[RMDB]
RNA sequence: GGGAACGACUCGAGUAGAGUCGAAAAGAUAUGGAGCAUGUCUACGACGAUCCGUAACAUCCCUCGGAAACGAGGGUGGGGGAGUAGUCCAUGCUCCUAAGUCAAAACAAGGAGUUCGCUCCUUGAAUCCUUACAAGAGCUUCGGCUCUUGUAAGGAAAAAGAAACAACAACAACAAC
Reactivity to 2A3 in 0.01 (KOAc 150mM, MgCl2 10mM, bicine 150mM(pH8.5), 24C), signal-to-noise 1, nucleotides 027 to 126: g050a000u050a030u100g000g000a000g000c010a010u010g000u000c010u030a030c040g300a120c050g000a150u000c020c000g000u050a040a030c040a300u300c000c030c010u000c010g030g050a190a100a040c040g000a010g040g000g000u020g000g000g050g030g010a040g020u030a010g010u000c150c020a050u010g000c000u000c010c000u000a000a000g000u000c020a010a010a120a090c000a020a030g000g000a010g030u120u210c300g100c120u000c020c000u000u020g000a000a050
Reactivity to DMS in 0.01 (KOAc 150mM, MgCl2 10mM, bicine 150mM(pH8.5), 24C), signal-to-noise 1, nucleotides 027 to 126: g000a010u000a300u000g000g000a000g040c030a010u000g010u010c020u000a020c000g000a130c240g020a040u000c030c010g020u000a020a030c130a070u010c000c010c000u020c000g000g000a170a060a120c000g000a010g000g010g030u000g000g000g000g000g000a040g020u000a030g000u000c190c010a010u000g030c000u010c000c010u010a000a030g010u000c070a140a090a110a220c020a000a000g000g000a040g030u010u040c290g040c010u000c010c000u000u000g000a100a200
Structure probing data (2A3 and DMS) for a 177-nucleotide construct. Conditions: 150 mM KOAc, 10 mM MgCl2 and 150 mM bicine (pH 8.5), 24 C. For 2A3 the reverse transcriptase was SuperScript II with manganese.